[RMDB]
RNA sequence: GGGAACGACUCGAGUAGAGUCGAAAAGAACUCACCAGCAAAUGUUUACGACAAGAUUCGACAUUUGCAAAUUACGUAGCGAUCUUCCAGAAUCUUGUGGAAACGUUCCCAAUCGCUACGCCCUAAACUUUAGAGGGAUAUUCGUAUCCCUCUAAAGAAAAGAAACAACAACAACAAC
Reactivity to 2A3 in 0.01 (KOAc 150mM, MgCl2 10mM, bicine 150mM(pH8.5), 24C), signal-to-noise 5, nucleotides 027 to 126: g040a070a040c050u040c100a110c030c040a020g010c010a020a010a010u040g020u060u130u130a120c100g020a040c040a070a040g000a100u060u060c040g010a010c010a030u030u030u020g000c010a050a010a000u130u060a020c020g010u010a000g010c000g010a010u020c040u090u030c090c010a020g040a050a080u050c040u060u100g020u040g050g030a080a100a030c040g000u000u000c010c000c000a010a000u010c020g000c020u000a010c000g010c010c000c000u160a160a110a070
Reactivity to DMS in 0.01 (KOAc 150mM, MgCl2 10mM, bicine 150mM(pH8.5), 24C), signal-to-noise 6, nucleotides 027 to 126: g000a110a140c130u000c050a110c110c090a160g000c010a020a020a010u000g000u000u000u020a150c220g000a110c040a030a020g010a040u000u000c130g010a030c030a010u000u000u000g010c020a060a050a080u020u000a050c020g030u000a010g010c010g000a010u000c090u000u000c050c050a050g010a050a020u000c010u000u010g020u000g000g010a030a080a150c130g000u000u000c010c000c010a160a020u000c010g010c000u000a010c010g010c020c020c010u000a050a070a130